Conditions: 150 mM KOAc, 10 mM MgCl2 and 150 mM bicine (pH 8.5), 24 C. Chemical mapping of a 207-nucleotide RNA with 2A3 and DMS. For 2A3 the reverse transcriptase was SuperScript II with manganese. In probing experiments dimethyl sulfate is read out at A N1 and C N3, which are open when not base-paired.

[RMDB]
RNA sequence: GGGAACGACUCGAGUAGAGUCGAAAACAAAGUAAUUUGCGCAGCCUUUAAGGGAUGUUACUCAUGCCACGAGAAAUUCAAUAUAUAAGAGCUCUCGUCUAUUGCAAGAUAUAAGUUACUGAGCAUGUUAUGUUGGAAAGAUAACAUGCUGUAGUAAGUGUAAAGGUAACUUCGGUUACCUUUACACAAAAGAAACAACAACAACAAC
Reactivity to 2A3 in 0.01 (KOAc 150mM, MgCl2 10mM, bicine 150mM(pH8.5), 24C), signal-to-noise 8, nucleotides 027 to 156: c040a010a120a020g050u070a040a160u090u080u170g030c070g000c010a030g030c020c000u100u170u220a110a080g030g010g010a020u050g020u080u070a040c040u040c080a030u150g050c030c010a030c030g020a020g030a020a080a030u140u090c030a140a020u100a030u050a020u050a270a040g020a020g030c010u000c010u000c020g050u010c060u090a120u000u180g000c020a050a010g040a040u070a030u040a230a030g040u030u000a010c000u010g020a000g000c000a000u000g000u000u000a010u030g190u150u050g080g040a060a060a030g050a020u000a000a000c000a000u000g000c000u000g000u010a010g000u000a050a060
Reactivity to DMS in 0.01 (KOAc 150mM, MgCl2 10mM, bicine 150mM(pH8.5), 24C), signal-to-noise 1, nucleotides 027 to 156: c060a060a070a090g010u020a030a130u000u010u010g030c070g050c040a120g040c020c060u000u000u010a130a200g030g020g050a050u000g020u000u010a110c040u020c040a110u000g020c040c130a040c000g030a130g020a030a080a060u000u000c020a070a140u010a180u000a160u010a050a160g000a130g000c060u010c010u000c000g010u000c090u000a010u020u000g030c030a060a070g040a160u000a060u000a090a070g000u020u000a020c050u000g030a000g010c010a030u000g010u000u000a000u010g010u000u040g020g010a100a140a230g010a010u000a010a010c000a000u000g010c000u010g000u010a030g000u020a040a140